Record summary:
Source: RMDB library OK1LIB, as collected in RNAgym. The record gives the reactivity of an RNA of 177 nucleotides to DMS and 2A3. For DMS, 117,649 sequencing reads were counted. For DMS the reverse transcriptase was MarathonRT. Conditions: 150 mM KOAc, 10 mM MgCl2 and 150 mM bicine (pH 8.5), 24 C. The 2A3 profile rests on 40,029 reads.
RNA sequence: GGGAACGACUCGAGUAGAGUCGAAAAUUGAGGUUGAUGAGUUGCUAAGGCUGGACUACUCUUCUUCUUCGGGAGCCUGAGCGAUAACCUUAUGCUUGCAAGGGGAUUUUAUCGGCAAGUUAGCUAAGACUGCCUGCACAUUCGUGUGCGGGUGGUUAAAAGAAACAACAACAACAAC
Reactivity to DMS in 0.01 (KOAc 150mM, MgCl2 10mM, bicine 150mM(pH8.5), 24C), signal-to-noise 9, nucleotides 027 to 126: u020u010g010a050g000g010u000u010g000a070u010g000a130g010u000u010g010c030u000a050a040g010g010c010u000g000g010a120c080u010a070c070u010c030u000u010c040u000u010c050u000u010c120g010g010g000a050g000c020c010u000g000a060g010c040g010a090u030a050a070c100c010u000u000a050u010g000c020u000u000g000c040a040a080g010g010g000g000a100u000u020u010u020a070u020c060g010g010c020a010a060g010u000u010a060g000c040u010a070a230
Reactivity to 2A3 in 0.01 (KOAc 150mM, MgCl2 10mM, bicine 150mM(pH8.5), 24C), signal-to-noise 9, nucleotides 027 to 126: u080u100g030a020g020g020u010u020g020a120u020g030a050g050u050u020g020c020u030a050a030g050g000c010u030g050g030a040c010u040a030c020u030c000u080u010c000u050u000c000u020u060c060g020g030g020a000g010c000c010u010g010a000g010c030g030a070u050a060a020c000c000u010u010a050u080g010c010u010u010g030c010a030a030g010g000g020g010a020u010u020u020u100a100u050c000g000g000c000a010a030g030u040u030a020g010c020u050a090a010